[RMDB]
RNA sequence: GGGAACGACUCGAGUAGAGUCGAAAACACAAACCUAUAGCUUCACACUUUUUGGCUGCGCUGUGCUUUCAAGUGGAAAAUUACUUUCGCAGCUUUAUGAUGCGGAAAUUAUAUGAAAAUCAUGGCGGUACGUAGUGCACUUCGGUGCACUACGUACAAAAGAAACAACAACAACAAC
Reactivity to 2A3 in 0.01 (KOAc 150mM, MgCl2 10mM, bicine 150mM(pH8.5), 24C), signal-to-noise 1, nucleotides 027 to 126: c170a000c030a000a170a000c000c000u120a010u030a200g060c000u130u070c060a050c010a070c080u010u090u000u000u070g070g000c060u100g000c040g000c020u020g040u000g000c010u000u000u010c040a010a000g060u130g060g020a000a000a000a000u030u010a030c080u000u000u030c000g000c000a060g000c000u070u030u000a070u150g070a030u010g000c010g000g090a000a050a000u170u080a050u070a010u060g030a010a030a000a100u260c090a040u080g110g000c000g000